[RMDB]
This 177-nucleotide RNA was probed chemically with 2A3 and DMS.
It was measured as part of the RMDB library TTRDEL.
The reactions ran in a buffer of 150 mM KOAc, 10 mM MgCl2 and 150 mM bicine (pH 8.5), at 24 C.
2A3 adducts were read by reverse transcription with SuperScript II with manganese.
For DMS the reverse transcriptase was MarathonRT.
Values cover nucleotides 27 to 126.
RNA sequence: GGGAACGACUCGAGUAGAGUCGAAAAGAUAUGGACUUAGACAUGCGUGAAGGUUCGGAAACGAACCCUGCACGCAACAGCUAACAUGUCCUAAGUCAAAAGUAAUCAUGGUUCGCCAUGAUUACAAUCUACUGCACUGGUUCGCCAGUGCAGUAGAAAAAGAAACAACAACAACAAC
Reactivity to 2A3 in 0.01 (KOAc 150mM, MgCl2 10mM, bicine 150mM(pH8.5), 24C), signal-to-noise 2, nucleotides 027 to 126: g070a010u180a150u270g060g000a000c010u010u020a020g040a040c010a070u110g000c000g010u010g000a080a030g010g010u010u000c000g030g040a030a110a070c010g010a000a010c030c000c010u120g050c010a020c000g000c020a020a030c030a020g020c050u120a070a060c050a230u110g010u000c000c050u030a060a010g020u040c020a040a000a000a170g000u000a010a020u000c000a010u000g000g050u040u060c190g100c090c010a010u000g000a000u010u010a000c000a000a010
Reactivity to DMS in 0.01 (KOAc 150mM, MgCl2 10mM, bicine 150mM(pH8.5), 24C), signal-to-noise 3, nucleotides 027 to 126: g010a180u000a230u020g000g030a020c020u010u000a000g010a080c060a160u010g000c000g040u000g020a220a090g010g020u000u000c010g000g010a080a100a140c000g010a010a000c020c030c050u030g000c010a000c020g000c020a020a040c250a150g040c110u000a060a100c220a030u000g020u000c060c060u000a030a030g010u000c060a050a080a050a100g000u010a000a010u000c000a010u010g000g000u000u010c210g020c000c000a000u000g000a000u000u000a000c000a090a050